[RMDB]
RNA sequence: GGGAACGACUCGAGUAGAGUCGAAAACUGGUCUUCGGACCAGAACAGCGGGGUCCUCUCGUUGAAAGAGACGCAUCGAUCAUACUGAAGCCUCCACGGUAUGGGAGCGUCCUGGAGAGAGGACGGAGGCACCCAUGAUCACAAAUUCGUUUGUGAACACAAAAGUCUAUUUCGAUAGACUUUUGUGAAAAGAAACAACAACAACAAC
Reactivity to 2A3 in 0.01 (KOAc 150mM, MgCl2 10mM, bicine 150mM(pH8.5), 24C), signal-to-noise 2, nucleotides 027 to 156: c000u000g000g000u010c000u060u080c300g140g010a000c010c000a000g010a070a020c030a000g090c070g040g040g020g010u020c010c010u000c010u010c010g100u140u130g120a130a120a050g110a020g010a020c000g010c000a110u300c060g070a010u040c010a000u010a010c010u020g040a150a040g050c000c010u000c010c010a020c010g000g000u010a000u000g010g000g010a020g000c000g000u010c000c010u040g030g000a050g000a000g000a000g050g000a000c000g000g000a000g000g000c000a030c000c010c000a070u160g040a110u060c000a000c010a040a030a070u170u100c170g070u050u020u010g010u030g010a100a020
Reactivity to DMS in 0.01 (KOAc 150mM, MgCl2 10mM, bicine 150mM(pH8.5), 24C), signal-to-noise 1, nucleotides 027 to 156: c020u020g000g000u000c030u000u000c290g040g000a030c000c010a020g010a030a060c110a080g040c080g020g000g000g000u010c010c000u010c000u000c020g000u010u000g010a150a190a160g010a110g060a010c000g090c020a270u000c190g040a060u000c020a040u000a020c000u000g000a040a200g030c000c020u000c020c030a300c000g010g010u000a040u000g000g000g010a070g010c000g050u000c000c000u000g040g030a120g010a140g000a050g000g000a040c000g000g000a060g100g050c060a070c000c000c010a190u000g010a180u000c040a010c030a000a030a120u000u000c240g020u000u000u000g040u000g110a010a300